[RMDB]
The record gives the reactivity of an RNA of 177 nucleotides to 2A3 and DMS. For 2A3 the reverse transcriptase was SuperScript II with manganese. As a SHAPE reagent, 2A3 marks flexible, mostly unpaired nucleotides at the ribose 2'-OH. Values cover nucleotides 27 to 126. For DMS the reverse transcriptase was MarathonRT. The DMS profile rests on 3,423 reads. It was measured as part of the RMDB library TTRDES.
RNA sequence: GGGAACGACUCGAGUAGAGUCGAAAAGAUAUGGAUAGCCUGAACAUCGAUCGAAAUGGGUCGGAAACGACCUUUCGGGAGUUCUGGCUAUCCUAAGUCAAAAGUAUGGUGCUUCGGCACCAUACAACAUUUCGCACUAGUUCGCUAGUGCGAAAUGAAAAGAAACAACAACAACAAC
Reactivity to 2A3 in 0.01 (KOAc 150mM, MgCl2 10mM, bicine 150mM(pH8.5), 24C), signal-to-noise 2, nucleotides 027 to 126: g010a000u030a000u060g000g000a010u020a000g000c000c000u010g020a020a010c030a030u300c080g040a020u010c000g000a010a030a060u210g110g000g030u040c000g010g010a010a020a010c000g000a010c010c010u000u000u000c020g000g020g000a120g020u010u000c000u000g020g000c000u010a000u010c000c000u000a010a000g000u020c020a000a030a110a120g010u000a010u010g010g020u000g010c040u100u120c300g150g020c000a010c020c000a000u010a000c000a000a000
Reactivity to DMS in 0.01 (KOAc 150mM, MgCl2 10mM, bicine 150mM(pH8.5), 24C), signal-to-noise 2, nucleotides 027 to 126: g000a010u000a040u010g000g000a010u000a000g010c000c000u010g000a010a010c010a300u010c250g000a030u010c000g000a010a010a100u030g000g000g010u000c000g020g000a000a010a020c000g000a000c000c000u000u000u000c000g000g010g000a020g000u010u000c000u010g000g000c000u000a000u000c000c000u000a000a070g000u000c010a100a080a140a150g000u010a000u000g000g030u000g000c000u000u010c300g020g010c000a010c000c000a000u000a000c000a110a200